The data come from the RNA Mapping Database (RMDB), library 15KLIB. Structure probing data (DMS and 2A3) for a 170-nucleotide construct. Values cover nucleotides 27 to 129. For 2A3, 3,829 sequencing reads were counted. The reactions ran in a buffer of 150 mM KOAc, 10 mM MgCl2 and 150 mM bicine (pH 8.5), at 24 C. For DMS, 5,616 sequencing reads were counted. For DMS the reverse transcriptase was MarathonRT.
RNA sequence: GGGAACGACUCGAGUAGAGUCGAAAAGGAGAAGUCACCUCCAGAGAAACCCUCUCCAACGAACAAAGAAGACCGCUGGGGCGCCAGGAAGAGUCCGUAGCGAUAGGAGGGGAUGCUAGGAGUCGGCACACUUCGCCGUUCGCGGCGAAGAAAAGAAACAACAACAACAAC
Reactivity to DMS in 0.01 (KOAc 150mM, MgCl2 10mM, bicine 150mM(pH8.5), 24C), signal-to-noise 2, nucleotides 027 to 129: g000g020a090g000a110a050g030u050c130a100c130c010u000c000c020a030g020a090g000a170a000a120c110c010c030u010c030u010c010c050a160a080c090g020a090a050c140a170a170a080g030a110a060g040a140c080c150g010c110u020g010g020g030g090c070g070c090c040a000g000g040a060a100g010a040g050u040c020c010g030u020a020g020c080g050a080u010a080g000g000a010g000g000g000g000a050u030g010c000u050a130g020g020a040g050u000c060g000g050c030a060c190a040
Reactivity to 2A3 in 0.01 (KOAc 150mM, MgCl2 10mM, bicine 150mM(pH8.5), 24C), signal-to-noise 3, nucleotides 027 to 129: g030g010a030g020a110a040g100u070c010a040c020c000u000c010c010a000g010a000g010a140a020a010c000c000c000u070c000u000c000c000a100a070c050g130a070a040c080a140a100a080g110a070a000g030a070c000c020g000c010u030g000g010g000g080c050g030c000c040a040g080g040a050a040g040a000g010u000c010c000g130u110a020g040c020g030a040u060a110g000g000a000g000g000g000g000a030u070g040c000u060a090g000g000a010g040u020c010g020g000c020a020c010a010